[RMDB]
RNA sequence: GGGAACGACUCGAGUAGAGUCGAAAAACGGGAAAUCGGACGAAACUCGUUGGUGCCCCAAACAACGCGAGCAUAGUUUCGCCAGGCGUGCAUCAUCAUCUCCUUUAUCUUCGCCCGCAUAUCGUCACGACUGCCGUCGGUUCGCCGACGGCAGUCGAAAAGAAACAACAACAACAAC
Reactivity to 2A3 in 0.01 (KOAc 150mM, MgCl2 10mM, bicine 150mM(pH8.5), 24C), signal-to-noise 1, nucleotides 027 to 126: a000c040g000g100g000a060a000a100u160c210g060g100a070c010g030a000a000a060c040u010c040g000u000u030g040g010u120g000c000c000c000c000a100a100a000c000a030a010c140g000c050g000a000g020c060a050u190a220g080u010u010u010c000g030c000c000a090g080g000c040g070u100g000c000a050u000c020a050u070c050a110u000c110u080c000c080u140u120u000a120u150c130u160u030c000g060c020c100c010g000c000a000u050a000u270c040g000u040c020a000